[RMDB]
RNA sequence: GGGAACGACUCGAGUAGAGUCGAAAACAAAAUCAAAACAGCUAUCACAUCAUAGGUUCCUUGUUGACUUAUUUCAUGGGGAUCUGGAAUAAGUUCUGGGUGAUUAUGGCUUCCUUUUUAGAGCUCAGUUCAAAAGAUGAGCAGUUUCAGGGUAGGACUGAAUUUCCUCUUUCGAGAGGAAAUUCAGAAAAGAAACAACAACAACAAC
Reactivity to 2A3 in 0.01 (KOAc 150mM, MgCl2 10mM, bicine 150mM(pH8.5), 24C), signal-to-noise 1, nucleotides 027 to 156: c020a010a050a010a100u120c010a010a100a030a090c080a010g020c040u040a020u110c060a040c010a120u060c020a010u070a090g020g000u060u100c000c010u020u020g040u030u100g040a010c000u030u020a010u010u100u000c040a120u150g070g070g020g000a040u000c020u010g010g010a020a000u010a000a000g010u070u020c030u040g010g000g010u040g030a080u060u060a040u080g010g000c000u050u060c000c000u110u140u040u080u160a180g050a020g060c000u010c020a080g000u200u090c070a120a050a000a100g010a100u050g000a020g000c010a020g000u030u080u000c050a040g000g030g040u050a010g000g100a000

An RNA of 207 nucleotides, treated with 2A3 and read out base by base. As a SHAPE reagent, 2A3 marks flexible, mostly unpaired nucleotides at the ribose 2'-OH.